Conditions: 150 mM KOAc, 10 mM MgCl2 and 150 mM bicine (pH 8.5), 24 C. The record gives the reactivity of an RNA of 177 nucleotides to DMS and 2A3. DMS adducts were read by reverse transcription with MarathonRT.
RNA sequence: GGGAACGACUCGAGUAGAGUCGAAAAGAUAUGGAAAUCCCAGCUUUUGACGGAGUGUACUCGGAAACGAGUACUCUCCGAUAAGCUGGAUUUCCUAAGUCAAAACCCCGCGGUUCGCCGCGGGGAACUCCACUACAUAGUUCGCUAUGUAGUGGAGAAAAGAAACAACAACAACAAC
Reactivity to DMS in 0.01 (KOAc 150mM, MgCl2 10mM, bicine 150mM(pH8.5), 24C), signal-to-noise 2, nucleotides 027 to 126: g020a030u000a100u020g000g010a000a000a000u000c160c140c080a000g010c010u000u000u010u010g010a210c130g030g010a020g020u000g020u000a000c000u010c010g050g000a020a020a050c010g000a020g020u000a000c000u000c000u000c000c000g030a020u010a010a020g010c000u000g000g000a040u000u000u000c000c000u000a000a060g000u010c010a200a120a200a230c000c010c030c000g080c000g000g000u000u020c190g030c000c000g020c000g000g000g020g000a010a020
Reactivity to 2A3 in 0.01 (KOAc 150mM, MgCl2 10mM, bicine 150mM(pH8.5), 24C), signal-to-noise 3, nucleotides 027 to 126: g000a000u010a010u090g000g060a020a010a010u100c150c110c020a000g010c030u220u170u300u300g300a260c100g000g010a000g000u010g000u000a010c000u000c030g000g030a020a000a000c010g000a000g010u010a010c000u000c000u010c000c000g010a010u010a010a000g000c000u000g010g000a000u000u000u000c000c000u000a000a010g000u000c000a010a040a230a300c010c010c000c000g000c010g000g120u060u090c300g030c170c020g010c000g000g010g000g000a000a020

The 2A3 profile rests on 4,389 reads.